[RMDB]
RNA sequence: GGGAACGACUCGAGUAGAGUCGAAAAGCGUGAGUACUGGCUGUUUGUGUCUCCAUCCAUUGCCAAUCAGCUGUCAUUAACCACGCAAGACUGUAACGGAGUGCUAAAUUACCGUGUGAAUACCAUACCCCAGAGGUAUGUUCGCAUACCUCUGGGGAAAAGAAACAACAACAACAAC
Reactivity to 2A3 in 0.01 (KOAc 150mM, MgCl2 10mM, bicine 150mM(pH8.5), 24C), signal-to-noise 4, nucleotides 027 to 126: g010c000g010u010g030a120g040u080a100c110u090g020g000c010u000g070u010u040u010g140u020g020u030c040u040c080c040a260u060c080c010a110u110u140g040c000c000a000a000u010c000a000g000c000u030g020u080c020a080u060u140a030a040c000c000a010c000g000c000a010a000g080a050c090u130g010u120a030a000c020g030g000a070g060u070g100c160u200a040a110a100u180u110a150c000c000g000u040g030u030g110a050a050u080a150c020c010a030u080a060
Reactivity to DMS in 0.01 (KOAc 150mM, MgCl2 10mM, bicine 150mM(pH8.5), 24C), signal-to-noise 3, nucleotides 027 to 126: g040c010g000u030g000a140g020u020a040c110u020g010g000c020u010g000u000u000u020g000u040g030u010c040u020c280c120a090u010c130c120a060u010u020g010c060c000a000a010u000c020a090g010c000u010g010u000c140a140u020u000a110a120c130c010a000c030g000c040a110a170g000a140c090u020g000u030a110a070c020g000g000a130g020u000g000c110u020a070a100a090u000u000a120c000c040g000u000g020u000g040a090a090u030a090c100c040a080u040a140